[RMDB]
RNA sequence: GGGAACGACUCGAGUAGAGUCGAAAAAGUCUCAUCUGCUGGAAAAUUCAUUCUUUUUAGACAAGGCUGCAUUUAUGAACAAAGGUACACAGUAUGUCAUGUCUAUGCUUUCUGACAUCAUUGGGUCUCAUGUUAGGUUGUUCGCAACCUAACAUGAAAAAGAAACAACAACAACAAC
Reactivity to 2A3 in 0.01 (KOAc 150mM, MgCl2 10mM, bicine 150mM(pH8.5), 24C), signal-to-noise 3, nucleotides 027 to 126: a000g040u010c020u000c020a080u010c010u050g010c020u030g060g100a060a060a080a090u140u100c030a080u080u080c040u050u170u040u050u090a030g000a040c040a050a010g020g010c000u010g000c060a040u090u080u100a120u170g020a080a020c030a090a110a030g110g030u070a030c090a000c000a040g030u060a050u100g020u030c000a030u060g000u010c050u070a070u090g060c020u040u080u010c050u030g030a030c010a040u090c030a050u060u070g080g010g020u010c020
Reactivity to DMS in 0.01 (KOAc 150mM, MgCl2 10mM, bicine 150mM(pH8.5), 24C), signal-to-noise 3, nucleotides 027 to 126: a070g010u000c010u000c040a100u000c060u010g010c060u000g010g010a080a040a080a080u020u010c070a070u010u010c030u000u010u000u010u030a080g000a060c100a060a050g010g010c040u010g000c050a080u000u000u000a100u010g000a060a060c120a050a060a070g020g030u000a050c090a050c080a070g000u000a060u000g010u000c030a060u000g000u000c040u000a050u000g000c160u000u010u000c020u000g000a050c020a030u000c080a070u010u000g010g000g010u010c080